[RMDB]
RNA sequence: GGGAACGACUCGAGUAGAGUCGAAAAGAUAUGGAGCCCUCGGGAGCCACAUUCGGAAACGAAUGAAUGGCGAAGAACGAGCGGCUCCUAAGUCAAAUACCCUUAUGUGGUUCGCCACAUAAGGGUAGUUGGGUAUGGAGUUCGCUCCAUACCCAACAAAAGAAACAACAACAACAAC
Reactivity to 2A3 in 0.01 (KOAc 150mM, MgCl2 10mM, bicine 150mM(pH8.5), 24C), signal-to-noise 1, nucleotides 027 to 126: g000a000u010a000u060g000g000a000g020c010c000c000u000c040g070g000g000a010g000c020c010a030c000a040u000u030c010g020g040a000a010a000c000g030a010a000u060g050a250a300u120g010g030c000g020a140a000g000a000a000c010g000a010g010c180g010g000c020u000c000c000u000a000a000g000u010c000a010a000a020u080a010c000c000c010u010u010a000u010g020u010g020g050u080u130c300g060c080c000a010c000a010u010a010a000g020g000g000u000a040
Reactivity to DMS in 0.01 (KOAc 150mM, MgCl2 10mM, bicine 150mM(pH8.5), 24C), signal-to-noise 1, nucleotides 027 to 126: g010a010u000a000u000g000g000a010g010c000c030c000u000c000g040g020g000a040g000c010c000a060c020a000u000u000c000g040g000a010a020a030c000g040a010a000u000g000a150a170u010g030g000c020g000a090a190g010a220a240c010g000a020g000c300g030g010c000u000c000c000u000a000a070g000u000c010a170a150a260u000a020c000c000c000u000u000a000u010g000u000g000g000u000u010c300g010c010c000a000c000a010u000a000a000g000g000g000u000a000
The record gives the reactivity of an RNA of 177 nucleotides to 2A3 and DMS. The 2A3 profile rests on 2,953 reads. High 2A3 reactivity points to a flexible backbone, as in loops and unpaired stretches. The RNA was probed in 150 mM KOAc, 10 mM MgCl2 and 150 mM bicine (pH 8.5) at 24 C. Source: RMDB library TTRDES, as collected in RNAgym.